This 177-nucleotide RNA was probed chemically with DMS. Reactivities are rounded to 0.1 and cut off at 0 and 3. Values cover nucleotides 27 to 126.
RNA sequence: GGGAACGACUCGAGUAGAGUCGAAAAGAUAUGGACUUAGCUAGGCUACCGUCGGAAACGACGGUUAGCCUUGGACCUAAGGUCCUAAGUCAAAAGUAAGCCCGUCAGUUCGCUGACGGGCUUACAACACCUCGUUUACGUUCGCGUAAACGAGGUGAAAAGAAACAACAACAACAAC
Reactivity to DMS in 0.01 (KOAc 150mM, MgCl2 10mM, bicine 150mM(pH8.5), 24C), signal-to-noise 1, nucleotides 027 to 126: g020a050u010a270u020g000g010a160c000u000u000a020g010c040u010a020g000g000c000u020a020c000c000g000u000c010g000g000a110a070a190c000g000a020c000g000g000u000u000a000g000c000c000u000u000g010g000a100c300c010u000a040a050g030g000u000c000c000u000a010a130g010u020c000a060a100a120a130g000u000a000a000g000c010c000c000g020u000c000a010g000u000u010c200g020c010u000g000a020c000g000g010g000c000u010u010a000c000a070a230